[RMDB]
RNA sequence: GGGAACGACUCGAGUAGAGUCGAAAAUCUACAUGACGGGAAAGCCUGUGCUCUUGGAAUUACAGUCAUAGUACAACAGAUCAAGUUCAAAGCAUCAUCUAAGUCAAGGAAAACCAGUAAAGAGGUUUGGAGAGACAAACAGGGUCAACUCCAGGCACCAGUAUUACUACUUCGGUAGUAAUACUGGAAAAGAAACAACAACAACAAC
Reactivity to 2A3 in 0.01 (KOAc 150mM, MgCl2 10mM, bicine 150mM(pH8.5), 24C), signal-to-noise 4, nucleotides 027 to 156: u020c010u020a070c020a090u080g040a030c070g010g000g060a060a070a070g060c020c030u050g030u080g040c040u040c020u080u080g010g070a130a080u130u050a100c040a030g030u040c030a050u070a070g060u080a040c080a100a020c030a090g080a150u070c050a070a030g050u120u080c020a080a030a040g010c010a020u040c000a010u000c040u100a070a030g040u060c030a010a020g030g020a000a070a020a050c020c020a010g030u100a040a140a030g100a030g020g030u020u070u040g010g000a010g020a000g000a010c000a030a140a020c050a050g160g030g010u020c030a070a060c040u030c030c020a010g000g030c020a010
Reactivity to DMS in 0.01 (KOAc 150mM, MgCl2 10mM, bicine 150mM(pH8.5), 24C), signal-to-noise 2, nucleotides 027 to 156: u010c040u010a050c000a110u000g010a070c010g040g020g030a180a120a140g010c020c000u010g060u000g020c050u000c050u010u000g000g010a080a090u000u000a070c090a100g000u010c030a150u000a150g030u000a060c090a050a120c090a070g000a060u000c070a050a170g000u000u000c040a080a050a170g020c020a050u000c040a060u000c090u020a030a110g010u000c030a050a060g010g000a020a060a050a080c010c050a130g000u000a040a060a080g030a090g010g000u000u000u000g030g000a080g010a300g020a080c030a070a030a120c030a070g000g000g010u000c010a020a090c010u000c000c040a010g020g000c060a100

This 207-nucleotide RNA was probed chemically with 2A3 and DMS. For 2A3, 3,070 sequencing reads were counted. For 2A3 the reverse transcriptase was SuperScript II with manganese. Conditions: 150 mM KOAc, 10 mM MgCl2 and 150 mM bicine (pH 8.5), 24 C. Source: RMDB library OK3TST, as collected in RNAgym.